[RMDB]
Chemical mapping of a 207-nucleotide RNA with 2A3. 2A3 adducts were read by reverse transcription with SuperScript II with manganese.
RNA sequence: GGGAACGACUCGAGUAGAGUCGAAAAAGAGAGAGAGAGAGCGAGCGCGCAAGAGGAGUCUCAGAGGCCAAACUCCGGCCAGUCAGGAGCCGGAAGGCUGAGCCCGGCUGACCUGACUUUGAGCUUCCCCGGAGUUAUCUCGCCUUGGCGCUCGCUAGCGAUGAUAUUAGUUCGCUAAUAUCAUCGCAAAAGAAACAACAACAACAAC
Reactivity to 2A3 in 0.01 (KOAc 150mM, MgCl2 10mM, bicine 150mM(pH8.5), 24C), signal-to-noise 2, nucleotides 027 to 156: a000g150a010g010a000g010a000g000a010g010a000g010a000g000c020g000a010g000c020g000c010g000c030a000a020g050a110g090g020a060g100u060c090u040c160a080g030a030g040g030c060c040a050a050a000c010u010c010c010g010g010c030c000a000g000u000c000a000g010g010a000g000c000c020g010g040a040a040g130g040c070u120g010a030g020c000c000c000g010g000c010u040g090a110c000c000u000g010a000c000u030u050u070g020a000g000c010u090u060c050c010c000c000g000g000a010g000u030u040a040u040c020u010c010g180c020c000u000u000g010g000c000g000c000u000c010g000c000u000a000